[RMDB]
RNA sequence: GGGAACGACUCGAGUAGAGUCGAAAACUUGAAAAGAGGAUUUAGGAAGCAACCUUCAGGAGUUAUCGUUGCUCCUCUGGACAAAACAUCGAUGUACACCAGAUUGUACUAUUCUACUGCUGGUAUCAGAAUCGGUGCUAUUCGUAGCACCGAUUCUAAAAGAAACAACAACAACAAC
Reactivity to 2A3 in 0.01 (KOAc 150mM, MgCl2 10mM, bicine 150mM(pH8.5), 24C), signal-to-noise 1, nucleotides 027 to 126: c000u020u080g020a000a000a070a000g070a020g010g020a030u090u080u210a090g090g100a090a010g000c000a010a030c010c010u060u090c050a070g210g000a140g260u080u130a060u070c080g040u020u000g000c010u000c010c000u000c000u000g030g000a000c000a020a040a010a010c010a030u110c030g110a080u140g070u090a010c010a010c060c000a010g050a060u090u120g030u020a030c010u150a260u150u080c040u020a050c020u010g070c000u010g070g000u050a040u150c040
Reactivity to DMS in 0.01 (KOAc 150mM, MgCl2 10mM, bicine 150mM(pH8.5), 24C), signal-to-noise 2, nucleotides 027 to 126: c140u000u000g000a010a120a140a070g010a030g020g040a240u000u000u010a130g030g000a160a080g000c030a030a010c000c030u000u030c080a120g010g020a190g000u000u000a030u010c140g030u000u000g000c010u000c010c000u010c030u000g020g020a300c090a020a030a080a090c200a120u000c070g030a060u000g010u000a050c050a030c030c070a080g000a090u030u010g030u000a010c110u000a090u010u010c140u000a030c010u010g030c000u000g000g010u000a080u000c140